[RMDB]
RNA sequence: GGGAACGACUCGAGUAGAGUCGAAAAAGGCCAGGCCGUGGCCAGAGCAGAUACGUAGGCCCAUGAAAUUGAUGAACUGAGAGUUGCUUCCAGUCCUGAGCGCACCAUCUGGAAUUCCAGUCUGAGGACCAUGCCAUCAUUUCGAUGAUGGCAUGGUAAAAGAAACAACAACAACAAC
Reactivity to 2A3 in 0.01 (KOAc 150mM, MgCl2 10mM, bicine 150mM(pH8.5), 24C), signal-to-noise 2, nucleotides 027 to 126: a000g050g000c010c010a010g060g010c030c010g140u050g060g000c010c010a000g000a020g000c040a010g020a070u070a080c050g020u040a060g050g000c010c000c010a020u100g050a060a100a110u120u140g060a070u090g020a080a020c030u040g030a020g010a000g210u070u110g010c000u060u000c020c010a000g010u010c000c000u030g010a020g020c040g000c030a020c020c000a030u050c000u020g030g080a080a090u100u060c010c010a010g050u000c030u040g030a130g050g020
Reactivity to DMS in 0.01 (KOAc 150mM, MgCl2 10mM, bicine 150mM(pH8.5), 24C), signal-to-noise 3, nucleotides 027 to 126: a050g030g000c020c010a070g030g020c090c090g010u010g000g020c000c010a060g010a120g010c050a040g000a080u010a030c100g000u010a120g010g010c000c020c030a120u020g010a060a100a140u030u040g010a020u000g020a170a060c050u000g010a090g000a050g010u030u000g000c070u020u000c000c020a110g000u000c010c000u010g000a080g020c070g000c050a070c030c020a040u020c050u000g000g020a120a130u010u010c040c000a050g010u010c000u000g010a130g000g000